[RMDB]
RNA sequence: GGGAACGACUCGAGUAGAGUCGAAAACAGAUGGCCGAAUAGCACUUCGCGAGGAUCUCGCCGUGACUCCGGUGGCUUCCGAAGAUGAAGUCCUCGACGUCGAGGUUGAGUGCCUGGCCUACUGCAGAGUUAAGCCUGGAUUCGUCCAGGCUUAACUAAAAGAAACAACAACAACAAC
Reactivity to DMS in 0.01 (KOAc 150mM, MgCl2 10mM, bicine 150mM(pH8.5), 24C), signal-to-noise 2, nucleotides 027 to 126: c040a000g000a280u000g040g010c020c000g020a090a060u010a160g000c020a040c030u000u000c200g020c140g030a100g020g020a090u010c020u010c000g000c050c040g020u010g010a220c080u010c240c070g030g010u000g000g010c000u000u000c010c040g030a140a190g020a130u000g000a020a050g000u000c000c000u000c030g010a070c060g010u000c030g000a020g020g020u000u010g000a030g000u000g000c000c100u010g020g000c010c000u020a180c010u010g020c060a140g020
Reactivity to 2A3 in 0.01 (KOAc 150mM, MgCl2 10mM, bicine 150mM(pH8.5), 24C), signal-to-noise 3, nucleotides 027 to 126: c010a010g060a050u040g000g000c010c020g080a180a200u090a140g000c000a010c020u130u130c150g050c060g090a100g130g080a060u030c010u010c010g000c000c000g050u070g060a040c060u050c120c070g080g050u050g000g000c000u030u000c020c020g200a200a070g070a110u230g010a010a000g030u070c000c000u030c000g050a020c020g020u020c000g010a010g040g020u030u130g020a000g000u010g030c010c020u030g000g030c000c000u040a090c010u010g090c050a050g020

Overview:
Source: RMDB library OK2TST, as collected in RNAgym. The record gives the reactivity of an RNA of 177 nucleotides to DMS and 2A3. For DMS, 1,452 sequencing reads were counted. 2A3 adducts were read by reverse transcription with SuperScript II with manganese.